[RMDB]
RNA sequence: GGGAACGACUCGAGUAGAGUCGAAAAGAUAUGGACCCAUCAUGGGAGAGCCAUCUCGGAAACGAGAUGAAGCUCAUCGAUCAUGGUGGGUCCUAAGUCAAACCACAUGAAGUUCGCUUCAUGUGGACUCUGUGGGUGUGUUCGCACACCCACAGAGAAAAGAAACAACAACAACAAC
Reactivity to 2A3 in 0.01 (KOAc 150mM, MgCl2 10mM, bicine 150mM(pH8.5), 24C), signal-to-noise 2, nucleotides 027 to 126: g040a000u020a000u040g000g000a000c000c030c000a010u010c010a000u010g120g120g050a300g040a000g000c000c000a000u000c010u010c010g010g000a010a010a010c020g000a000g010a000u020g040a040a020g000c010u000c000a040u230c150g170a190u090c010a000u000g010g000u000g030g020g000u000c000c000u000a000a000g010u010c000a000a010a030c010c000a000c000a000u010g000a010a020g040u080u240c280g180c200u030u000c000a000u000g000u010g000g020a020
Reactivity to DMS in 0.01 (KOAc 150mM, MgCl2 10mM, bicine 150mM(pH8.5), 24C), signal-to-noise 1, nucleotides 027 to 126: g030a020u000a090u030g000g000a050c000c000c000a040u000c000a000u000g020g010g020a180g040a010g010c000c000a010u000c000u000c000g010g000a010a020a070c000g020a020g020a000u000g000a200a090g020c000u000c000a190u010c300g000a130u010c020a010u000g020g040u000g000g000g020u000c000c000u000a000a020g000u000c030a200a170a170c000c000a010c000a020u000g000a020a000g000u000u010c270g010c020u000u010c000a000u010g010u000g020g000a040